[RMDB]
RNA sequence: GGGAACGACUCGAGUAGAGUCGAAAAUGGACUUUUUACAGUUCCUACUUAUCCGGUUUUAACGCUGUUUUAUUGGCGCAAAGGUAUACGGAUAAACAACUAAUAAUUAAACCUUUUGUGUGCGAAAAUUGGACGUUUAGGUUCGCCUAAACGUCAAACAACUUCUAUGAUUCGUCAUAGAAGUUGUAAAAGAAACAACAACAACAAC
Reactivity to 2A3 in 0.01 (KOAc 150mM, MgCl2 10mM, bicine 150mM(pH8.5), 24C), signal-to-noise 4, nucleotides 027 to 156: u080g030g010a030c040u080u160u100u130u160a110c130a050g020u090u100c000c010u000a060c030u020u040a000u000c000c000g110g000u030u100u060u200a070a040c050g020c030u040g200u090u090u050u150a110u080u170g030g000c010g000c020a020a010a000g050g000u080a070u040a130c010g000g000a020u040a010a090a020c030a010a010c040u150a030a150u120a150a050u210u100a130a060a070c010c000u100u100u120u140g070u030g030u050g040c090g020a070a030a080a160u100u130g110g010a000c000g000u000u000u000a000g000g020u010u030c160g040c000c000u000a000a000a000c000g000u000c000a000a000
Reactivity to DMS in 0.01 (KOAc 150mM, MgCl2 10mM, bicine 150mM(pH8.5), 24C), signal-to-noise 2, nucleotides 027 to 156: u010g020g010a060c020u000u000u000u020u020a080c160a100g000u000u000c010c020u000a120c210u000u000a020u010c000c010g020g000u010u000u000u000a160a060c060g010c000u000g000u010u000u000u010a180u070u000g030g000c020g040c020a040a060a080g060g000u010a090u000a070c020g000g000a030u000a000a040a100c020a040a130c050u000a130a170u010a070a100u030u000a080a090a120c020c010u000u010u000u010g000u000g020u000g000c000g000a070a050a080a210u010u000g020g020a010c000g040u010u010u010a030g020g010u000u010c300g000c010c010u000a010a020a020c020g000u000c010a020a050
This 207-nucleotide RNA was probed chemically with 2A3 and DMS. Source: RMDB library M2RFPK, as collected in RNAgym. For DMS, 3,860 sequencing reads were counted.